[RMDB]
Chemical mapping of a 177-nucleotide RNA with DMS and 2A3.
Conditions: 150 mM KOAc, 10 mM MgCl2 and 150 mM bicine (pH 8.5), 24 C.
For 2A3, 14,082 sequencing reads were counted.
As a SHAPE reagent, 2A3 marks flexible, mostly unpaired nucleotides at the ribose 2'-OH.
Source: RMDB library M2PK50, as collected in RNAgym.

RNA sequence: GGGAACGACUCGAGUAGAGUCGAAAAUGAGAAGCAUUCGUGCUUCUCAGAAAUGCUGCCCAAAGAGGACCUGGGGGUGUCUGGGCUGCUAAACUCUUCAGCUAACCGCGAUCUUCGGAUCGCGGAAAUGUAUCUUUACAUUCGUGUAAAGAUACAUAAAAGAAACAACAACAACAAC
Reactivity to DMS in 0.01 (KOAc 150mM, MgCl2 10mM, bicine 150mM(pH8.5), 24C), signal-to-noise 8, nucleotides 027 to 126: u010g000a010g000a020a010g010c000a040u000u010c200g020u000g010c000u000u000c000u000c000a010g000a080a080a090u000g010c040u010g010c020c000c010a070a100a150g010a140g000g010a060c030c050u000g010g010g000g000g010u010g010u000c040u000g010g000g010c030u000g010c050u000a050a080a130c100u000c030u000u000c080a090g010c200u010a090a190c010c000g010c000g010a010u000c000u000u010c180g030g000a010u000c000g010c000g000g000a000a010
Reactivity to 2A3 in 0.01 (KOAc 150mM, MgCl2 10mM, bicine 150mM(pH8.5), 24C), signal-to-noise 5, nucleotides 027 to 126: u040g000a000g000a000a000g000c010a010u040u150c230g080u050g010c000u000u000c000u000c000a010g010a010a070a020u120g000c030u030g000c000c010c010a100a140a020g220a050g060g030a020c040c060u120g040g070g010g000g000u020g010u000c030u040g020g020g020c010u020g000c010u020a020a050a040c050u060c030u260u160c070a050g040c060u080a090a070c000c000g000c000g000a010u010c000u030u030c130g100g000a010u010c000g000c000g010g000a000a000